The record gives the reactivity of an RNA of 177 nucleotides to DMS and 2A3.
RNA sequence: GGGAACGACUCGAGUAGAGUCGAAAAGCCAUCGCUUUCGAGCGAUGGCAUUGCCCAAAGAGGACCUGGGGGUGUCUGGGCUGCAAAACUCAUCAGCCGUUCUACCGCUAAAUUUCGAUUUAGCGAAUUCCAUGUGAUAAUUCGUUAUCACAUGGAAAAAAGAAACAACAACAACAAC
Reactivity to DMS in 0.01 (KOAc 150mM, MgCl2 10mM, bicine 150mM(pH8.5), 24C), signal-to-noise 8, nucleotides 027 to 126: g010c000c000a000u000c000g020c000u000u000u010c190g010a020g030c000g010a010u000g000g010c000a000u000u000g010c000c000c000a080a110a140g000a100g000g000a050c040c040u000g000g000g000g000g010u010g010u000c050u000g010g010g010c020u000g010c130a050a070a090a060c060u000c040a080u000c050a030g010c020c010g020u000u000c020u000a150c130c030g000c000u000a000a010a010u000u000u010c150g010a030u000u000u000a010g020c000g010a100a120
Reactivity to 2A3 in 0.01 (KOAc 150mM, MgCl2 10mM, bicine 150mM(pH8.5), 24C), signal-to-noise 3, nucleotides 027 to 126: g000c010c000a000u010c000g020c020u090u050u140c270g100a010g000c000g000a000u000g000g030c000a000u010u110g030c000c000c010a070a110a000g110a020g030g030a010c020c040u070g040g000g000g000g000u020g010u020c040u060g040g020g000c000u030g000c040a010a030a060a150c030u040c030a070u020c010a040g000c010c000g000u030u000c040u130a220c020c030g000c010u020a010a000a010u110u100u090c240g060a020u000u000u020a000g000c000g020a010a020